[RMDB]
RNA sequence: GGGAACGACUCGAGUAGAGUCGAAAAGUCUGGAGCAAUCCUGACCUCCCGGCUGCAAGGAUAACUACAUGGGCUGGCUCCGAUCCGGGUACCUUGGGUCGGGGCGAGAAAAUAGGGUACUGGCGUCCGGUUUAGCGUGUGACUGCGCGACUCCGGAGCAUAACGAUGCGUUCGCGCAUCGUUAUGCAAAAGAAACAACAACAACAAC
Reactivity to 2A3 in 0.01 (KOAc 150mM, MgCl2 10mM, bicine 150mM(pH8.5), 24C), signal-to-noise 1, nucleotides 027 to 156: g010u020c010u040g000g000a010g020c060a040a160u020c020c000u040g010a010c010c020u040c030c000c000g050g030c020u030g010c060a070a080g070g030a170u100a200a150c020u110a080c110a120u150g030g050g000c020u010g050g000c000u020c000c000g000a000u000c030c000g000g000g000u020a030c000c020u010u030g000g000g000u020c000g020g010g000g000c000g000a010g010a000a160a000a010u040a000g000g020g000u000a000c000u060g160g060c020g060u000c010c000g000g020u020u010u160a000g000c010g000u050g040u080g130a170c120u210g010c010g000c000g010a010c010u000c000c010g000g050a050